Chemical mapping of a 207-nucleotide RNA with DMS and 2A3. DMS adducts were read by reverse transcription with MarathonRT. The reactions ran in a buffer of 150 mM KOAc, 10 mM MgCl2 and 150 mM bicine (pH 8.5), at 24 C. In probing experiments dimethyl sulfate is read out at A N1 and C N3, which are open when not base-paired. 2A3 adducts were read by reverse transcription with SuperScript II with manganese.
RNA sequence: GGGAACGACUCGAGUAGAGUCGAAAAUUGGGGUAGGAUGUUCUGAACCGCAUCAUAGUAGUGGCUACUACAAUGGGGUUUUGUAGUAUGGGCUAGAGAUGGGGCUCAAAUCUAGGGACAAUAAGCGAAAGUGGAAGUUUAUAGCCAAGAAACAAGGAGUGGAUUUAUGAUUCGUCAUAAAUCCACUAAAAGAAACAACAACAACAAC
Reactivity to DMS in 0.01 (KOAc 150mM, MgCl2 10mM, bicine 150mM(pH8.5), 24C), signal-to-noise 2, nucleotides 027 to 156: u010u020g040g010g050g040u000a070g020g020a090u000g030u000u000c090u010g010a040a030c030c030g000c000a020u000c030a190u000a070g010u000a070g000u000g030g010c050u020a030c020u000a000c020a050a020u000g010g040g010g020u000u000u000u000g050u000a040g020u000a070u000g000g020g000c020u000a090g000a090g010a130u000g020g000g020g050c000u000c040a020a080a110u000c060u000a080g000g010g020a090c090a070a070u000a020a070g010c010g000a050a080a080g000u010g010g000a070a070g010u010u000u000a090u000a090g020c060c020a040a120g000a080a040a080c090a050a130g020g020
Reactivity to 2A3 in 0.01 (KOAc 150mM, MgCl2 10mM, bicine 150mM(pH8.5), 24C), signal-to-noise 3, nucleotides 027 to 156: u070u070g010g010g020g030u050a020g030g010a040u060g020u060u060c050u080g040a050a040c010c020g090c040a010u050c040a000u060a030g040u000a000g030u040g090g060c050u080a010c000u010a000c020a010a050u100g050g010g030g030u020u100u050u080g010u010a010g010u000a070u130g030g030g000c020u050a020g010a000g010a100u020g070g000g030g000c010u000c000a040a080a030u040c040u040a020g010g010g020a000c030a050a130u100a090a010g040c030g060a080a010a010g060u050g030g010a030a000g000u000u070u050a110u070a000g000c010c020a030a020g080a030a050a030c030a000a040g150g000
The DMS profile rests on 3,190 reads.